[RMDB]
RNA sequence: GGGAACGACUCGAGUAGAGUCGAAAAGGAAAUUUGAUUGUAUUGCAUAUACAACUAUGCGAUGCACUUUGUUCAUUUUAACUUUGGAUAUAUGUGCCUUGCUAUGAACGCGUUCAUUUUUAAGUGACACAUUAUUCGUGUUCGCACGAAUAAUGUGAAAAGAAACAACAACAACAAC
Reactivity to 2A3 in 0.01 (KOAc 150mM, MgCl2 10mM, bicine 150mM(pH8.5), 24C), signal-to-noise 4, nucleotides 027 to 126: g070g030a060a060a050u120u130u130g070a080u030u050g020u020a010u000u070g080c040a030u060a010u000a200c010a050a040c060u030a030u070g000c000g000a000u010g000c000a010c020u050u080u100g030u020u020c000a020u010u050u040u130a110a130c090u040u050u060g020g020a000u020a000u010a010u130g030u030g020c010c010u010u030g010c010u060a040u160g030a070a020c020g000c030g100u020u030c030a070u000u040u020u050u160a120a040g030u050g050a020
Reactivity to DMS in 0.01 (KOAc 150mM, MgCl2 10mM, bicine 150mM(pH8.5), 24C), signal-to-noise 5, nucleotides 027 to 126: g010g000a100a080a060u000u010u010g000a100u000u010g010u000a010u000u000g020c050a040u010a030u000a110c300a070a100c120u000a030u000g000c000g020a010u000g010c010a050c300u000u000u000g010u010u000c010a010u000u000u010u000a040a200c100u000u000u000g000g000a070u000a030u010a050u010g010u000g000c020c040u000u000g000c040u000a080u000g000a060a060c120g010c160g010u000u000c030a040u010u000u000u000u010a040a110g000u000g000a160